Notes
Structure probing data (2A3 and DMS) for a 207-nucleotide construct. It was measured as part of the RMDB library RNAMAK.

RNA sequence: GGGAACGACUCGAGUAGAGUCGAAAAGGGCGUUCGCGCCCGAGGACCCGUAGGAGCACUACCCACCCUACCGGAUCGUUGAAAUCUAGUUCGAAAGAGCUAGAUGGAGAUCUAGGUAGGAGGUGCUCCUAAACGGAAAUCAUGUGUUCGCACAUAAUGUGCGAUAACAUUUCGAUGUUAUCGCACAAAAAGAAACAACAACAACAAC
Reactivity to 2A3 in 0.01 (KOAc 150mM, MgCl2 10mM, bicine 150mM(pH8.5), 24C), signal-to-noise 2, nucleotides 027 to 156: g000g000g000c030g040u070u150c140g060c010g000c130c000c000g010a050g040g100a100c000c000c000g000u010a000g010g020a000g000c020a000c010u180a210c040c080c070a040c000c020c000u000a000c000c000g000g000a010u000c000g140u170u070g020a000a010a000u010c000u000a000g010u000u000c010g020a100a060a060g020a020g000c000u000a000g000a000u000g000g010a050g000a000u000c000u150a300g020g000u000a000g000g000a010g030g000u000g010c010u000c000c000u010a000a020a000c000g030g070a010a050a060u210c150a100u140g020u010g030u090u060c200g000c080a020c010a020u250a120a060
Reactivity to DMS in 0.01 (KOAc 150mM, MgCl2 10mM, bicine 150mM(pH8.5), 24C), signal-to-noise 1, nucleotides 027 to 156: g050g010g030c000g030u000u000c290g140c010g000c020c000c000g000a010g040g010a230c020c000c070g010u000a030g010g000a060g020c020a010c000u000a100c010c020c030a300c180c000c000u000a020c020c000g000g000a020u000c000g000u020u040g000a140a140a020u000c000u000a020g010u000u000c000g000a180a160a170g010a020g030c000u000a020g010a000u000g010g000a300g010a010u000c000u000a060g040g000u000a030g010g000a020g000g000u000g010c000u000c010c000u010a000a000a040c030g000g020a080a060a060u010c060a090u010g010u000g000u000u020c180g000c040a040c070a060u030a130a190
Values cover nucleotides 27 to 156. The reactions ran in a buffer of 150 mM KOAc, 10 mM MgCl2 and 150 mM bicine (pH 8.5), at 24 C.